[RMDB]
RNA sequence: GGGAACGACUCGAGUAGAGUCGAAAAGAUAUGGAAUCGUUGUCAGGGUUUCAACUACCCACCUGAACACCUUCGGAAACGAAGGUGUUCAGAGGUUGUUACCCUUGGAUUUACGAUUCCUAAGUCAGGAAACAAUAUGGUUCGCCAUAUUGUUUCCAAAAGAAACAACAACAACAAC
Reactivity to DMS in 0.01 (KOAc 150mM, MgCl2 10mM, bicine 150mM(pH8.5), 24C), signal-to-noise 2, nucleotides 027 to 126: g000a030u000a300u010g020g000a010a000u000c000g020u010u000g000u000c010a040g010g020g000u000u000u000c010a030a020c010u010a040c150c090c150a300c110c010u010g000a010a000c000a000c000c000u000u010c010g000g010a080a120a220c020g020a000a000g000g010u000g010u000u000c000a000g000a050g050g000u000u000g000u020u000a020c000c000c000u010u010g000g000a020u000u000u000a010c000g020a010u000u000c000c000u000a050a080g020u000c030a180
Reactivity to 2A3 in 0.01 (KOAc 150mM, MgCl2 10mM, bicine 150mM(pH8.5), 24C), signal-to-noise 1, nucleotides 027 to 126: g050a070u150a020u200g000g000a010a010u000c000g020u030u090g020u050c040a020g030g020g000u020u040u080c030a010a010c000u100a100c040c100c030a090c010c010u000g000a000a010c000a010c010c000u000u020c000g040g030a070a050a080c000g000a010a010g000g020u000g000u000u000c000a000g000a000g000g000u000u010g020u010u020a020c000c030c000u030u190g190g000a020u300u220u260a010c000g010a000u000u000c000c010u020a130a010g050u060c120a030